[RMDB]
Chemical mapping of a 207-nucleotide RNA with 2A3 and DMS. Conditions: 150 mM KOAc, 10 mM MgCl2 and 150 mM bicine (pH 8.5), 24 C. For DMS the reverse transcriptase was MarathonRT.

RNA sequence: GGGAACGACUCGAGUAGAGUCGAAAAGGGGUCUUUCCCAAGGAGCGGAACCAAGCUUGGAUUUAUGGAGCUGAAGCCUCCACGGCUCCAUUGUCAGCUUGCUAACGCUCCUCGGGAAAGACGGAGGCACCCAAAACAGGCGUUUCGACGCCUGUAACUGAAAUAAUAGAUUCGUCUAUUAUUUCAGAAAAGAAACAACAACAACAAC
Reactivity to 2A3 in 0.01 (KOAc 150mM, MgCl2 10mM, bicine 150mM(pH8.5), 24C), signal-to-noise 4, nucleotides 027 to 156: g050g000g010g010u010c000u010u000u000c000c000c000a010a000g000g000a000g010c040g010g040a020a000c020c010a010a010g020c020u200u240g130g020a090u230u300u200a020u100g000g000a000g000c010u020g040a190a010g050c040c040u050c030c030a030c020g000g000c000u000c010c000a000u000u010g000u010c010a010g010c010u010u010g000c030u150a130a020c000g000c010u000c000c000u000c010g000g000g000a000a000a020g000a000c010g000g010a010g010g030c050a050c030c000c000a030a060a010a010c000a000g010g000c010g020u070u130u170c170g080a020c000g000c000c000u010g000u000a010a020
Reactivity to DMS in 0.01 (KOAc 150mM, MgCl2 10mM, bicine 150mM(pH8.5), 24C), signal-to-noise 2, nucleotides 027 to 156: g010g000g040g030u010c010u010u000u000c010c010c000a010a060g040g000a030g010c010g020g020a150a220c290c020a000a020g010c030u000u000g040g010a080u010u000u000a040u000g020g010a010g000c010u000g000a090a120g020c080c020u010c020c050a300c020g010g010c000u020c010c020a030u000u000g010u000c020a090g030c020u020u000g020c010u010a090a300c020g020c000u000c000c010u010c000g020g000g010a020a020a030g020a000c000g000g020a030g020g050c040a090c000c000c030a060a030a090a050c020a030g020g030c000g020u000u000u000c180g010a100c030g000c000c010u000g010u000a020a180